[RMDB]
RNA sequence: GGGAACGACUCGAGUAGAGUCGAAAAUUGAACGGAUUCGUCCGUUCAACGCGUGCGAUCCAAACGUAGUACAAAAGUAGAGACGAAAGCACAAGGAUCAAAUGAUACAGCCGUUCGCGGCUGUAAACUACAUCUUAUUUUUCGAAAUAAGAUGUAGAAAAGAAACAACAACAACAAC
Reactivity to DMS in 0.01 (KOAc 150mM, MgCl2 10mM, bicine 150mM(pH8.5), 24C), signal-to-noise 9, nucleotides 027 to 126: u000u010g000a010a000c000g010g000a030u000u020c220g020u000c000c000g010u000u000c000a020a020c110g010c080g010u000g000c070g010a040u000c020c010a080a130a110c030g010u000a060g030u010a080c090a070a050a070a080g020u000a070g010a100g000a110c070g000a070a060a110g010c070a030c090a070a100g020g010a030u000c020a100a100a080u010g000a220u000a020c000a000g000c000c000g010u000u010c210g010c020g010g010c000u010g000u000a000a030a180
Reactivity to 2A3 in 0.01 (KOAc 150mM, MgCl2 10mM, bicine 150mM(pH8.5), 24C), signal-to-noise 9, nucleotides 027 to 126: u010u010g000a010a000c000g000g010a010u040u060c180g060u000c030c000g000u000u000c000a000a000c020g040c020g010u040g020c040g010a010u000c010c000a050a050a030c040g030u040a030g060u050a080c030a050a290a050a050g080u090a060g050a030g020a140c050g070a130a060a030g050c030a030c050a120a050g020g000a020u030c030a030a060a040u140g030a030u010a050c000a010g000c020c010g020u050u100c220g000c010g100g000c000u000g000u010a010a000a000